[RMDB]
RNA sequence: GGGAACGACUCGAGUAGAGUCGAAAAUCAUUAAGGAUACGUGGAAUGUGCAUGAUCUAUGUAUAAAGGCUGAGGUAGAUCCUAGCUAUUUUGAGUGUCAGAUCAACAAUGGUACUCACCAUUACUGCCUACGACUGCUUUUCGAAGCAGUCGUAGGAAAAGAAACAACAACAACAAC
Reactivity to 2A3 in 0.01 (KOAc 150mM, MgCl2 10mM, bicine 150mM(pH8.5), 24C), signal-to-noise 2, nucleotides 027 to 126: u090c020a000u050u190a100a080g020g000a120u080a060c040g020u040g000g070a100a050u080g080u140g120c010a040u030g020a070u140c040u110a010u080g010u000a040u110a160a050a000g090g000c060u170g270a010g030g010u070a030g010a190u050c010c000u040a010g000c000u040a210u160u110u070u090g040a010g000u090g020u070c000a040g030a120u120c010a000a050c050a080a000u010g000g030u040a040c000u030c020a010c000c010a020u130u070a080c040u120g070
Reactivity to DMS in 0.01 (KOAc 150mM, MgCl2 10mM, bicine 150mM(pH8.5), 24C), signal-to-noise 1, nucleotides 027 to 126: u000c100a090u010u010a090a150g010g000a030u000a050c010g050u010g000g000a050a050u010g050u000g000c040a130u010g010a030u010c030u000a070u020g020u000a040u020a080a060a060g010g010c050u020g020a040g000g000u000a050g000a130u000c000c010u000a070g020c060u000a080u000u000u000u000g000a050g010u000g030u000c050a030g000a050u010c150a070a080c180a050a030u010g010g010u010a110c080u000c080a150c070c050a070u010u020a130c230u000g010
Source information
Source: RMDB library OK2TRN, as collected in RNAgym. The record gives the reactivity of an RNA of 177 nucleotides to 2A3 and DMS. The RNA was probed in 150 mM KOAc, 10 mM MgCl2 and 150 mM bicine (pH 8.5) at 24 C. For 2A3, 921 sequencing reads were counted.